Structure probing data (2A3) for a 207-nucleotide construct.
For 2A3, 1,332 sequencing reads were counted.
The data come from the RNA Mapping Database (RMDB), library RSTRND.
RNA sequence: GGGAACGACUCGAGUAGAGUCGAAAACGUAAAACUGCACCUGUUGCAGCAUAAAACACCUCUAAUUCAGGUUCGAGCGCUUACCGUCUGACACCGUUAAAGAUAGUAAGCACAACCCCAACGGUUGCUCUAGAAUUUCGCCUUUGGUCGGCAUUCUGAAAUAGAGACUGUUCGCAGUCUCUAUUUCAAAAGAAACAACAACAACAAC
Reactivity to 2A3 in 0.01 (KOAc 150mM, MgCl2 10mM, bicine 150mM(pH8.5), 24C), signal-to-noise 3, nucleotides 027 to 156: c030g020u060a040a020a050a010c010u010g000c000a010c020c110u160g130u240u020g010c020a010g000c030a040u170a080a120a000a000c030a030c000c000u050c070u110a130a110u070u040c050a050g030g080u020u090c100g040a030g040c100g000c020u010u000a010c000c020g000u000c000u020g030a030c060a090c160c090g080u080u100a030a040a030g000a000u010a020g010u010a000a000g010c020a010c010a040a010c020c010c000c030a050a040c050g040g000u020u070g040c030u030c010u060a060g020a110a100u040u100u100c070g020c010c010u120u060u100g050g050u110c040g000g000c020a020u130u000c040u060